[RMDB]
RNA sequence: GGGAACGACUCGAGUAGAGUCGAAAAGAUAUGGAGUGCAAUGAGCUUGAACUACAAGCGUCCUCGGAAACGAGGACGUCUUGCAAGUGAGCACUCCUAAGUCAAAGCAUGUCGUUCGCGACAUGCACAGAUGUAGCACGUUCGCGUGCUACAUCUGAAAAGAAACAACAACAACAAC
Reactivity to 2A3 in 0.01 (KOAc 150mM, MgCl2 10mM, bicine 150mM(pH8.5), 24C), signal-to-noise 3, nucleotides 027 to 126: g050a020u050a050u150g000g000a020g000u020g000c030a160a300u300g040a180g070c020u040u010g050a180a150c150u220a050c300a000a000g010c000g000u000c000c000u010c010g030g010a090a070a040c010g000a000g000g040a000c000g000u010c000u010u000g010c000a010a010g000u030g080a040g000c010a000c000u010c020c000u000a100a010g020u010c050a160a000a000g000c000a000u010g000u000c010g030u050u150c300g020c000g140a000c000a010u000g000c010a000
Reactivity to DMS in 0.01 (KOAc 150mM, MgCl2 10mM, bicine 150mM(pH8.5), 24C), signal-to-noise 3, nucleotides 027 to 126: g000a050u000a300u010g000g010a010g020u040g020c000a300a130u000g030a290g010c040u000u000g020a060a030c070u040a300c010a040a020g000c010g000u000c000c010u000c000g000g010a110a110a170c000g000a020g010g000a010c000g010u010c020u000u010g000c000a000a020g010u000g010a290g010c010a020c000u000c000c000u030a000a090g000u000c050a080a150a180g000c010a000u000g010u000c010g030u020u010c280g040c020g000a010c000a000u000g020c000a140